RNA sequence: GGGAACGACUCGAGUAGAGUCGAAAACUGUUUGACCUGAAGGUGCCUACUAAGGACGAAGAAGUGCUUAUAAACAUCAGAAACUCAUUGAAAGCUAGAUCCGAGUUUGUUAGAAAUAACGAUAAACGGAUCAUAUUCUGUUCGCAGAAUAUGAUCCAAAAGAAACAACAACAACAAC
Reactivity to 2A3 in 0.01 (KOAc 150mM, MgCl2 10mM, bicine 150mM(pH8.5), 24C), signal-to-noise 2, nucleotides 027 to 126: c030u070g030u170u090u070g090a080c020c020u000g040a060a010g010g000u020g020c050c000u060a130c040u040a070a040g020g020a050c010g010a010a120g060a060a010g040u040g030c020u070u020a070u080a130a090a000c020a030u070c020a020g160a050a070a020c020u020c020a070u040u140g070a150a020a010g000c020u030a020g010a100u000c020c010g030a000g050u020u110u090g010u000u070a020g020a010a020a020u030a030a000c000g030a010u140a150a080a040c090
Reactivity to DMS in 0.01 (KOAc 150mM, MgCl2 10mM, bicine 150mM(pH8.5), 24C), signal-to-noise 3, nucleotides 027 to 126: c060u000g010u010u010u000g010a080c050c040u000g000a080a080g010g030u000g000c020c020u000a090c190u020a100a070g000g030a040c050g020a130a100g010a070a060g000u000g010c040u000u000a100u000a110a110a060c070a030u010c070a060g010a070a040a050c060u000c050a090u000u000g010a080a070a100g020c070u010a080g000a050u020c020c010g010a120g010u000u010u000g020u000u000a020g010a120a110a130u000a020a040c040g000a070u020a040a060a100c150